[RMDB]
RNA sequence: GGGAACGACUCGAGUAGAGUCGAAAACUAUUUAUAGACAGAACAGUGGAAAACGUAUAUCGCUAUAAACCUUAGACCCCGAUUCUUCCAGUCGUACAAUUCCACAUAGGCGAGGCAUAAGCGAAAGACUCACCAUGAGGUUCGCCUCAUGGUGAGUAAAAGAAACAACAACAACAAC
Reactivity to 2A3 in 0.01 (KOAc 150mM, MgCl2 10mM, bicine 150mM(pH8.5), 24C), signal-to-noise 2, nucleotides 027 to 126: c000u010a050u050u090u010a050u000a050g070a020c030a050g030a080a000c000a020g040u110g110g090a150a160a050a020c020g050u050a060u000a060u220c000g000c000u000a000u030a140a070a040c000c010u000u000a010g050a200c040c000c000c000g060a040u120u030c000u050u000c000c000a000g040u010c000g010u060a010c060a040a000u090u000c040c080a070c010a030u010a070g010g020c010g000a000g010g060c000a010u010a130a120g000c020g000a040a070a000g070
Reactivity to DMS in 0.01 (KOAc 150mM, MgCl2 10mM, bicine 150mM(pH8.5), 24C), signal-to-noise 2, nucleotides 027 to 126: c030u010a010u050u010u060a040u010a030g000a080c130a300g010a050a040c130a050g100u030g010g000a090a070a070a060c130g030u000a080u040a120u020c000g070c020u000a020u000a030a150a050c180c060u000u010a080g000a130c020c050c020c060g010a050u010u000c050u010u030c020c100a040g000u000c000g050u000a010c060a060a230u000u000c000c000a010c050a120u020a070g000g020c030g000a030g010g000c050a100u020a030a050g000c060g000a080a130a120g000
Chemical mapping of a 177-nucleotide RNA with 2A3 and DMS. The DMS profile rests on 1,453 reads. For 2A3 the reverse transcriptase was SuperScript II with manganese. For DMS the reverse transcriptase was MarathonRT. It was measured as part of the RMDB library OK1LIB.